The record gives the reactivity of an RNA of 177 nucleotides to 2A3 and DMS. 2A3 adducts were read by reverse transcription with SuperScript II with manganese. The reactions ran in a buffer of 150 mM KOAc, 10 mM MgCl2 and 150 mM bicine (pH 8.5), at 24 C. For DMS the reverse transcriptase was MarathonRT. Source: RMDB library OK1LIB, as collected in RNAgym.
RNA sequence: GGGAACGACUCGAGUAGAGUCGAAAAACAUGCUACCAUGGACCGUACAGAGGGCAGCGAGACCGUGAGAUGGAGCGAAUCCCUUCAAGCUGGUCCCAGUUCGGCUCGCCGUAUGCAACUCGACGGCAGUUAUUAUGAAAUUCGUUUCAUAAUAACUAAAAGAAACAACAACAACAAC
Reactivity to 2A3 in 0.01 (KOAc 150mM, MgCl2 10mM, bicine 150mM(pH8.5), 24C), signal-to-noise 3, nucleotides 027 to 126: a000c040a030u110g000c010u050a050c010c010a020u040g030g020a060c000c010g000u090a030c030a060g040a030g000g030g000c020a000g000c000g000a030g030a170c010c010g020u040g030a120g010a030u060g000g010a000g010c040g060a040a130u030c020c000c000u010u150c130a080a010g000c000u050g000g020u000c000c040c000a040g010u070u080c000g010g000c010u020c020g000c000c010g080u100a070u120g030c010a040a060c040u000c050g020a010c000g020g000c000
Reactivity to DMS in 0.01 (KOAc 150mM, MgCl2 10mM, bicine 150mM(pH8.5), 24C), signal-to-noise 1, nucleotides 027 to 126: a090c120a050u040g010c040u010a090c030c030a040u000g000g020a120c000c010g040u000a090c110a110g010a040g000g010g010c010a060g000c050g020a050g010a140c020c020g020u010g010a070g000a040u000g000g000a050g000c010g000a300a260u020c000c050c060u000u000c300a120a300g000c000u000g000g000u000c000c000c000a300g010u010u010c030g010g000c000u000c010g010c010c200g000u010a020u030g010c050a050a040c010u000c010g000a030c010g000g000c070